[RMDB]
RNA sequence: GGGAACGACUCGAGUAGAGUCGAAAAGCAGUGUGGGCCUGGGUUAGGGUUAGGGUUAGUCCUGGUUCCACACCGCAGGUGGCCCUGUGACUAGGAGCAGCCACCUUGCAUCCCAGUUGCCCCAGCACUUACCUAACCCUUUCGAGGGUUAGGUAAGAAAAGAAACAACAACAACAAC
Reactivity to DMS in 0.01 (KOAc 150mM, MgCl2 10mM, bicine 150mM(pH8.5), 24C), signal-to-noise 2, nucleotides 027 to 126: g030c080a080g030u000g010u000g010g010g010c030c020u020g000g020g020u000u020a180g000g020g020u020u020a100g000g010g000u000u010a020g010u000c010c000u000g000g020u010u000c000c010a030c070a020c000c050g020c020a000g000g020u000g010g000c080c050c000u000g010u000g000a140c250u010a050g040g000a190g010c230a300g000c010c000a000c000c020u000u010g000c080a170u000c020c010c000a100g000u000u010g020c010c000c020c030a100g020c150a180
Reactivity to 2A3 in 0.01 (KOAc 150mM, MgCl2 10mM, bicine 150mM(pH8.5), 24C), signal-to-noise 2, nucleotides 027 to 126: g000c050a050g000u020g000u070g030g000g050c010c020u040g060g000g000u050u030a040g100g050g070u050u150a100g090g030g070u090u080a010g020u010c010c010u010g020g010u300u140c010c000a000c010a010c000c000g010c010a000g000g000u000g000g000c010c030c040u020g060u070g070a150c140u130a030g030g020a060g090c070a000g000c040c000a020c000c000u000u090g000c010a050u010c000c010c020a000g120u120u200g050c010c020c000c010a030g050c030a040

Conditions: 150 mM KOAc, 10 mM MgCl2 and 150 mM bicine (pH 8.5), 24 C. Structure probing data (DMS and 2A3) for a 177-nucleotide construct. Reactivities are given for positions 27 through 126. For 2A3, 3,256 sequencing reads were counted. For 2A3 the reverse transcriptase was SuperScript II with manganese.